[RMDB]
RNA sequence: GGGAACGACUCGAGUAGAGUCGAAAAUCUAGGGUCCCGCAUGUCAAUUGACAUGGACUGGUCCGAGAGAAAACACAUACGCGUAAAUAGAAGCGCGUAUGCACACGGAGGGAAAAAAGCCCGGGAGAAUGGGAUUAUUAGUUCGCUAAUAAUCCAACACUGGAAUUUAGUUCGCUAAAUUCCAGUGAAAAGAAACAACAACAACAAC
Reactivity to 2A3 in 0.01 (KOAc 150mM, MgCl2 10mM, bicine 150mM(pH8.5), 24C), signal-to-noise 1, nucleotides 027 to 156: u030c010u070a090g000g000g000u000c030c000c000g010c010a000u000g000u010c040a160a300u140u300g000a010c020a010u020g010g040a050c020u070g000g000u000c000c000g000a000g000a000g010a000a080a010a010c080a000c000a000u000a020c010g010c040g020u060a030a250a210u200a240g160a300a080g000c000g000c000g000u000a000u020g000c030a020c000a000c020g010g040a080g060g000g000a010a140a000a100a140a140g030c040c000c000g060g120g010a020g140a110a080u250g070g060g000a040u000u000a000u000u000a020g080u010u070c110g040c070u000a020a000u000a000a000u000c000c000a010a000
Structure probing data (2A3) for a 207-nucleotide construct. Source: RMDB library M2RFPK, as collected in RNAgym. For 2A3, 459 sequencing reads were counted.